This 177-nucleotide RNA was probed chemically with DMS and 2A3. Source: RMDB libraries RFM100 and RFMREP, as collected in RNAgym.
RNA sequence: GGGAACGACUCGAGUAGAGUCGAAAAGCCAGAAUGGAGGCAACGAUGAAACACUUCCCUUUAAAAGUUGCGUCACUAACCUUGAAGAAAGGGACAACUAUUGGUAGGCAGUUUGGGUGGGGCGCCAUAUUAAAUUGUGCUUCGGCACAAUUUAAUAAAAAGAAACAACAACAACAAC
Reactivity to DMS in 0.01 (KOAc 150mM, MgCl2 10mM, bicine 150mM(pH8.5), 24C), signal-to-noise 6, nucleotides 027 to 126: g010c010c020a110g010a100a070u020g010g010a090g000g010c030a030a030c050g010a120u000g000a110a060a070c130a100c090u000u010c010c000c010u020u020u010a080a060a080a140g000u000u000g010c040g000u010c030a100c130u000a070a150c030c010u000u000g010a130a080g000a120a030a020g000g000g000a090c150a060a090c120u010a060u010u020g010g010u010a040g010g010c050a040g010u010u020u010g010g010g010u000g000g020g000g000c050g010c040c030a060
Reactivity to 2A3 in 0.01 (KOAc 150mM, MgCl2 10mM, bicine 150mM(pH8.5), 24C), signal-to-noise 4, nucleotides 027 to 126: g060c000c000a020g030a050a090u250g070g010a050g040g020c020a040a020c040g100a060u160g110a060a080a020c080a030c080u050u040c000c000c000u020u110u050a090a070a010a010g020u030u030g050c050g080u030c000a000c080u060a120a060c000c010u020u040g030a030a030g150a130a090a030g010g000g020a020c020a020a060c010u070a040u160u040g080g010u010a060g040g030c010a030g010u050u090u080g050g010g010u090g000g000g000g020c010g000c030c020a010

The reactions ran in a buffer of 150 mM KOAc, 10 mM MgCl2 and 150 mM bicine (pH 8.5), at 24 C.